Structure probing data (2A3 and DMS) for a 177-nucleotide construct. The DMS profile rests on 1,142 reads. For 2A3 the reverse transcriptase was SuperScript II with manganese. For DMS the reverse transcriptase was MarathonRT. The 2A3 profile rests on 971 reads.
RNA sequence: GGGAACGACUCGAGUAGAGUCGAAAAGAAAGAAAGCCGAAGCAGCGAAAGAGGUCAAACGUCAGGAUUUCGGGCUUAAAAACGACAUUAUGCAGAAAGCCGACCUCAAUGUCGUAAACAAAGAAAAACUAUGAUGGUCGUUCGCGACCAUCAUAGUAAAAGAAACAACAACAACAAC
Reactivity to 2A3 in 0.01 (KOAc 150mM, MgCl2 10mM, bicine 150mM(pH8.5), 24C), signal-to-noise 1, nucleotides 027 to 126: g120a000a020a000g110a020a050a000g000c000c000g020a010a000g130c070a000g000c010g090a020a090a080g070a000g020g020u000c020a020a080a040c030g070u050c130a050g080g000a000u000u080u030c040g090g000g010c060u110u040a030a070a000a000a000c000g000a030c010a000u050u050a040u280g040c020a020g120a120a160a000g090c030c000g030a060c000c000u030c060a000a000u010g020u000c000g000u000a130a180a000c140a000a060a050g220a000a050a050a000
Reactivity to DMS in 0.01 (KOAc 150mM, MgCl2 10mM, bicine 150mM(pH8.5), 24C), signal-to-noise 1, nucleotides 027 to 126: g000a140a070a000g000a110a010a000g030c010c000g040a050a050g030c190a010g000c060g020a100a010a060g000a010g000g000u050c040a060a030a180c060g000u000c030a140g030g030a230u000u100u000c070g040g080g050c000u000u000a060a050a050a120a000c090g020a010c040a000u000u000a010u000g030c020a060g000a010a280a290g060c130c050g000a000c000c000u000c050a010a040u000g000u000c030g000u040a000a040a000c220a000a010a060g000a040a030a000a030